[RMDB]
This 177-nucleotide RNA was probed chemically with 2A3 and DMS. The DMS profile rests on 1,618 reads. The RNA was probed in 150 mM KOAc, 10 mM MgCl2 and 150 mM bicine (pH 8.5) at 24 C. The 2A3 profile rests on 1,119 reads.
RNA sequence: GGGAACGACUCGAGUAGAGUCGAAAAGUGGACGUGGUCGUGGGGUGAACCGGGAUGGAGGCCGUCGGGGACGCGUUCGUUUUAAACAUGACGUCGGACUCCAAGGUCCGAAAGAUCGUAGACGAGGAGUUUAGGGGUAGUUCGCUACCCCUAAACUAAAAGAAACAACAACAACAAC
Reactivity to 2A3 in 0.01 (KOAc 150mM, MgCl2 10mM, bicine 150mM(pH8.5), 24C), signal-to-noise 1, nucleotides 027 to 126: g000u000g010g050a040c040g010u060g050g050u160c100g080u100g000g050g000g010u030g010a020a050c050c000g030g030g070a040u150g040g010a010g020g040c040c000g020u050c020g000g000g000g040a020c030g000c060g020u000u050c050g000u000u030u030u150a090a150a010c050a050u080g020a030c010g030u090c030g000g030a030c030u020c080c070a070a040g080g010u020c000c000g000a050a000a000g030a020u030c040g050u080a040g030a050c040g030a060g140g000
Reactivity to DMS in 0.01 (KOAc 150mM, MgCl2 10mM, bicine 150mM(pH8.5), 24C), signal-to-noise 2, nucleotides 027 to 126: g020u010g010g000a060c040g010u010g020g000u000c070g020u000g060g030g000g010u010g010a100a110c100c030g010g000g000a120u000g000g010a120g010g000c050c050g030u000c080g000g000g000g010a040c130g010c090g010u010u010c040g010u010u000u000u010a040a060a120c100a010u000g010a140c200g000u000c000g010g000a040c000u000c190c260a060a050g010g000u000c000c010g000a000a040a060g020a090u010c030g000u000a100g020a110c070g020a120g020g000